[RMDB]
RNA sequence: GGGAACGACUCGAGUAGAGUCGAAAAACUGCGGUAUUCGUACCGCAGUACAUAAAAAGGAUAAAAUACCAGUAGCCCGAAACGCAAGCCAGCACUACUGGCGCAAGAACCACUUCGGUGGUUCUAAGAGCUCAUUUUAAUUCGUUAAAAUGAGCUCAAAAGAAACAACAACAACAAC
Reactivity to DMS in 0.01 (KOAc 150mM, MgCl2 10mM, bicine 150mM(pH8.5), 24C), signal-to-noise 4, nucleotides 027 to 126: a010c000u000g020c000g010g010u000a010u000u010c170g030u000a000c000c000g000c000a000g010u000a020c070a060u000a030a050a050a120a110g010g010a120u010a090a080a100a140u020a130c010c000a070g010u000a070g000c020c030c020g000a050a060a110c210g000c120a070a060g000c040c020a070g030c140a200c140u000a130c010u000g000g010c040g010c180a100a020g000a000a010c000c000a000c000u000u000c200g070g020u000g000g000u000u000c010u000a050a090
Reactivity to 2A3 in 0.01 (KOAc 150mM, MgCl2 10mM, bicine 150mM(pH8.5), 24C), signal-to-noise 4, nucleotides 027 to 126: a010c000u000g000c000g000g000u010a030u020u080c160g040u050a010c010c010g020c010a000g010u000a000c000a010u250a020a110a010a010a010g090g010a070u190a250a220a110a030u200a170c010c020a010g060u060a030g070c000c020c050g040a090a090a010c070g000c070a070a020g020c020c020a010g050c060a030c150u200a040c010u070g000g040c000g000c020a010a010g000a010a000c000c000a000c010u030u030c120g120g000u000g000g000u000u000c000u000a010a020